[RMDB]
RNA sequence: GGGAACGACUCGAGUAGAGUCGAAAAGAACCUCGAACCUAUCUAGGAAUACGAUAUAGCGUUACUUCCGAACGGCAAACCAUGGCACUACGAAGUAAACGUAUGAUAGGCAAGAGUAAAGAAAACGCUUACGCGCUUCUUUCGAGAAGCGCGUAAGAAAAGAAACAACAACAACAAC
Reactivity to 2A3 in 0.01 (KOAc 150mM, MgCl2 10mM, bicine 150mM(pH8.5), 24C), signal-to-noise 2, nucleotides 027 to 126: g000a000a030c000c000u000c000g000a060a000c000c000u000a000u000c000u010a000g050g260a060a130u070a240c170g060a080u100a040u130a100g000c000g000u000u000a010c000u000u000c020c000g010a030a090c140g000g000c000a000a000a210c130c020a300u300g040g000c000a000c010u020a030c030g000a080a000g000u030a050a050a050c000g000u030a030u090g000a010u010a000g000g010c060a030a000g030a000g040u090a050a020a000g060a060a020a090a000c030g030
Reactivity to DMS in 0.01 (KOAc 150mM, MgCl2 10mM, bicine 150mM(pH8.5), 24C), signal-to-noise 1, nucleotides 027 to 126: g000a120a080c160c000u000c000g000a300a100c000c020u000a000u000c100u000a300g000g000a000a200u000a300c170g000a040u000a300u120a000g010c000g020u000u000a000c000u000u000c000c000g000a080a120c300g000g000c000a130a080a130c300c210a060u000g000g000c000a000c000u000a300c300g000a060a060g000u000a000a080a000c000g000u000a240u000g000a040u000a000g000g000c000a200a290g000a000g140u180a080a140a000g000a000a080a220a300c040g000

Overview:
Source: RMDB library RFM100, as collected in RNAgym. Structure probing data (2A3 and DMS) for a 177-nucleotide construct. 2A3 adducts were read by reverse transcription with SuperScript II with manganese. Reactivities are given for positions 27 through 126. DMS adducts were read by reverse transcription with MarathonRT. Conditions: 150 mM KOAc, 10 mM MgCl2 and 150 mM bicine (pH 8.5), 24 C.